[RMDB]
RNA sequence: GGGAACGACUCGAGUAGAGUCGAAAAGAUAUGGAAAUCACUUCGAUAAGCUGGUGUCGGAAACGACACCCAGCUUUUGACGAAGGAAUUCCUAAGUCAAACCCGGGAAAGUUCGCUUUCCCGGGAACUUAGAAAUAUGCUUCGGCAUAUUUCUAAGAAAAGAAACAACAACAACAAC
Reactivity to DMS in 0.01 (KOAc 150mM, MgCl2 10mM, bicine 150mM(pH8.5), 24C), signal-to-noise 2, nucleotides 027 to 126: g000a010u000a190u000g000g000a000a020a070u010c040a150c010u000u000c000g010a140u000a030a020g020c000u000g010g030u000g010u000c010g040g010a050a020a120c000g020a020c000a000c120c100c060a000g010c010u000u010u010u010g010a210c050g000a010a010g000g010a070a100u000u000c000c000u000a010a150g000u010c030a090a090a220c000c000c000g020g000g000a000a000a000g020u000u010c280g000c010u000u000u000c000c000c010g000g000g000a000a010
Reactivity to 2A3 in 0.01 (KOAc 150mM, MgCl2 10mM, bicine 150mM(pH8.5), 24C), signal-to-noise 2, nucleotides 027 to 126: g030a030u050a040u130g000g100a020a040a040u130c120a230c300u060u000c010g090a140u060a300a000g000c000u010g000g000u000g000u020c030g020g030a040a080a050c000g000a020c010a010c000c000c000a000g010c000u010u000u040u130g060a010c000g000a020a000g010g010a010a010u000u000c010c010u010a040a040g010u000c030a070a020a270c000c030c000g000g000g010a010a050a010g060u150u250c300g020c130u020u000u020c010c000c020g050g000g020a000a000
This 177-nucleotide RNA was probed chemically with DMS and 2A3. 2A3 adducts were read by reverse transcription with SuperScript II with manganese. Values cover nucleotides 27 to 126. For DMS, 1,482 sequencing reads were counted. It was measured as part of the RMDB library TTRDEL. The RNA was probed in 150 mM KOAc, 10 mM MgCl2 and 150 mM bicine (pH 8.5) at 24 C.